[RMDB]
RNA sequence: GGGAACGACUCGAGUAGAGUCGAAAAGCGUACUACGUGUCUUUUGACGAUGCGAGGAUCAGUGGCGAAUCGCAUCCCAAAUAGGAUGCGAAACCACUGGGAGCAUCGAUAAGACACGUAUCGCAAAGGUUUCUCCUGUUUCGACAGGAGAAACCAAGAUAUUGCGAUUCUUCGGAAUCGCAAUAUCAAAAGAAACAACAACAACAAC
Reactivity to 2A3 in 0.01 (KOAc 150mM, MgCl2 10mM, bicine 150mM(pH8.5), 24C), signal-to-noise 2, nucleotides 027 to 156: g000c010g050u090a080c050u000a000c030g000u000g000u000c020u030u120u060u130g190a110c050g000a000u000g010c000g060a300g000g020a020u010c000a000g010u000g020g000c080g160a070a050u010c000g000c000a000u000c000c010c010a200a300a040u240a060g000g000a000u010g000c000g000a050a010a010c000c000a010c000u000g000g010g000a020g000c000a000u000c000g030a050u020a010a000g000a000c000a010c000g000u000a000u020c000g010c000a060a060a020g000g000u000u000u000c000u010c000c000u010g010u060u090u110c250g100a010c010a000g000g000a000g000a000a000a000c000c000a000a000
Reactivity to DMS in 0.01 (KOAc 150mM, MgCl2 10mM, bicine 150mM(pH8.5), 24C), signal-to-noise 1, nucleotides 027 to 156: g010c030g020u000a070c070u000a000c000g040u030g010u000c010u020u000u000u010g040a220c100g020a010u000g020c030g000a100g020g020a070u000c000a010g000u000g000g010c000g020a160a130u000c000g000c010a000u000c020c000c010a040a160a230u030a070g010g010a020u000g000c000g030a010a050a020c000c010a000c000u000g010g000g010a180g020c000a010u000c000g000a110u010a050a080g010a030c020a030c020g000u000a000u000c010g000c020a030a110a150g010g010u000u000u000c000u000c000c000u000g000u000u000u010c290g020a100c000a000g000g020a020g010a000a000a000c000c010a000a120